[RMDB]
RNA sequence: GGGAACGACUCGAGUAGAGUCGAAAAAUUGCCGCGUGGGGCAUCAUCAUCAACGCCGUGUUCAACGGGGUACAGUCCGCCGUUGGUGCCGUGGCUGACUUUUUCCGCAACGCGUGGGCUGUUGCCGUGAGUAGUACCGUUUCGACGGUACUACUCAAAAAGAAACAACAACAACAAC
Reactivity to 2A3 in 0.01 (KOAc 150mM, MgCl2 10mM, bicine 150mM(pH8.5), 24C), signal-to-noise 1, nucleotides 027 to 126: a000u080u090g020c000c010g060c020g000u120g000g190g000g000c020a020u010c020a020u000c010a010u060c020a030a040c100g000c030c040g040u030g020u150u150c070a040a000c010g020g000g040g020u050a030c020a030g040u000c010c030g030c010c020g070u010u010g060g010u110g000c020c050g060u060g010g000c030u040g030a090c000u090u080u000u070u080c030c030g010c040a020a010c020g070c040g000u000g070g000g000c000u040g050u070u110g040c010c000g060
Reactivity to DMS in 0.01 (KOAc 150mM, MgCl2 10mM, bicine 150mM(pH8.5), 24C), signal-to-noise 3, nucleotides 027 to 126: a060u000u000g000c020c010g020c070g040u020g020g020g000g000c040a050u000c070a050u000c080a070u000c100a080a060c090g010c030c020g000u000g010u010u000c180a110a050c020g000g010g010g020u010a060c070a020g000u000c010c010g040c010c010g000u010u000g000g010u000g000c070c050g020u000g000g000c040u000g000a090c140u010u000u000u000u000c000c030g020c060a030a040c040g050c140g020u000g000g010g010c020u000g000u000u010g040c010c060g010